[RMDB]
RNA sequence: GGGAACGACUCGAGUAGAGUCGAAAAACUAGCUCUACGGAGCUAGAAGGGAUAGCUCCGUGUUGCCGUCUGACCCCCCGACCCGACGGCAACACGGGGCUCUCAUACGCGCAGUACGCUGCGCGAAAAGGAUAUCGUAAUUCGUUACGAUAUCCUUAAAAGAAACAACAACAACAAC
Reactivity to DMS in 0.01 (KOAc 150mM, MgCl2 10mM, bicine 150mM(pH8.5), 24C), signal-to-noise 6, nucleotides 027 to 126: a140c010u000a000g000c000u000c000u000a160c160g020g000a020g010c000u000a000g020a100a070g010g010g010a040u000a030g010c000u000c000c000g020u000g010u000u000g010c000c010g010u000c000u010g000a150c030c030c010c000c030c010g010a140c130c060c070g000a010c000g010g000c010a010a000c010a000c000g010g000g000g000c000u000c010u010c020a110u020a150c030g010c000g040c010a010g010u020a120c210g020c000u000g000c010g020c000g000a010a050
Reactivity to 2A3 in 0.01 (KOAc 150mM, MgCl2 10mM, bicine 150mM(pH8.5), 24C), signal-to-noise 6, nucleotides 027 to 126: a010c010u010a000g000c000u000c010u010a070c300g090g000a000g000c000u000a000g010a030a080g060g020g010a040u060a080g000c000u000c000c000g000u000g000u000u000g000c020c000g000u000c040u100g250a290c000c010c000c010c000c020g060a080c020c020c030g000a000c000g000g000c000a000a000c000a000c000g000g000g000g000c000u000c000u000c000a070u110a030c010g000c000g000c000a000g010u040a020c230g030c100u000g000c010g000c000g000a020a010
This 177-nucleotide RNA was probed chemically with DMS and 2A3. For DMS the reverse transcriptase was MarathonRT. Source: RMDB libraries RFM100 and RFMREP, as collected in RNAgym. The RNA was probed in 150 mM KOAc, 10 mM MgCl2 and 150 mM bicine (pH 8.5) at 24 C.